[RMDB]
RNA sequence: GGGAACGACUCGAGUAGAGUCGAAAAGAUAUGGAUAGCUACCCACCUCAUCAAGGCCGAUGAAAUCGGAAACGAUGGAGGCUCAACUGAGAGGCUAUCCUAAGUCAAACCGGACUUCGGUCCGGAAGUAGAUGGAUAACUUCGGUUAUCCAUCUACAAAAGAAACAACAACAACAAC
Reactivity to 2A3 in 0.01 (KOAc 150mM, MgCl2 10mM, bicine 150mM(pH8.5), 24C), signal-to-noise 3, nucleotides 027 to 126: g030a060u240a120u240g000g000a000u010a010g000c010u140a240c020c000c020a010c000c000u010c000a050u040c070a090a080g050g000c020c020g170a220u060g100a070a010a000u030c010g020g020a100a060a030c020g000a010u020g010g020a010g010g020c040u030c080a050a060c050u020g000a010g010a000g050g000c000u000a000u000c000c000u020a090a030g140u070c120a070a070a120c000c000g010g010a000c000u020u150c300g070g000u000c000c010g000g000a000a010
Reactivity to DMS in 0.01 (KOAc 150mM, MgCl2 10mM, bicine 150mM(pH8.5), 24C), signal-to-noise 3, nucleotides 027 to 126: g010a090u020a170u000g000g000a020u000a010g010c010u000a150c010c000c010a300c140c000u000c000a010u000c100a160a240g000g010c000c010g010a100u020g000a090a080a080u000c000g000g000a060a050a170c020g000a000u000g000g010a030g020g000c020u010c040a090a170c300u010g000a020g000a170g000g000c000u010a010u000c000c010u010a010a110g000u010c150a050a110a160c010c010g000g000a000c000u000u010c210g020g000u000c000c000g000g000a010a040
An RNA of 177 nucleotides, treated with 2A3 and DMS and read out base by base. The 2A3 profile rests on 6,079 reads. The RNA was probed in 150 mM KOAc, 10 mM MgCl2 and 150 mM bicine (pH 8.5) at 24 C. 2A3 adducts were read by reverse transcription with SuperScript II with manganese. The data come from the RNA Mapping Database (RMDB), library TTRDEL.